The record gives the reactivity of an RNA of 177 nucleotides to DMS and 2A3. For DMS, 4,298 sequencing reads were counted. It was measured as part of the RMDB library OK1LIB. The reactions ran in a buffer of 150 mM KOAc, 10 mM MgCl2 and 150 mM bicine (pH 8.5), at 24 C. DMS (dimethyl sulfate) methylates the pairing face of unpaired adenines and cytosines.
[RMDB]
RNA sequence: GGGAACGACUCGAGUAGAGUCGAAAAGAAAAGAAAACUGGCCCGAUGCGGAAAAGUAGUGAAGAAACUGUGGGUGCAAUAGGCCAGAAUCUCUGUUUUGGCCCCUACAGGUCAUCGGCAUGAGAGAGGGAAUGUAUAUCUUCGGAUAUACAUUCCCAAAAGAAACAACAACAACAAC
Reactivity to DMS in 0.01 (KOAc 150mM, MgCl2 10mM, bicine 150mM(pH8.5), 24C), signal-to-noise 2, nucleotides 027 to 126: g020a030a070a080a120g000a110a030a080a060c030u010g000g010c060c020c010g000a100u000g030c050g000g000a090a060a120a060g000u050a030g030u000g000a070a120g010a090a090a070c050u000g000u010g000g000g010u020g000c140a040a070u020a090g000g010c000c020a020g000a010a030u000c170u060c170u020g030u010u000u010u010g000g000c020c000c010c030u000a020c050a030g000g000u030c050a050u000c030g000g010c020a020u010g000a050g000a070g000a160
Reactivity to 2A3 in 0.01 (KOAc 150mM, MgCl2 10mM, bicine 150mM(pH8.5), 24C), signal-to-noise 3, nucleotides 027 to 126: g020a000a030a000a000g100a000a090a000a070c050u060g080g000c000c010c010g000a050u070g000c050g090g080a110a190a080a030g130u200a060g080u070g140a070a140g020a120a190a010c030u030g010u000g000g030g040u150g030c050a030a180u170a300g000g000c010c000a000g020a000a000u000c100u020c070u150g060u030u000u020u030g040g000c000c000c000c000u010a010c000a020g040g060u000c010a020u010c000g050g000c010a060u180g030a050g030a020g030a070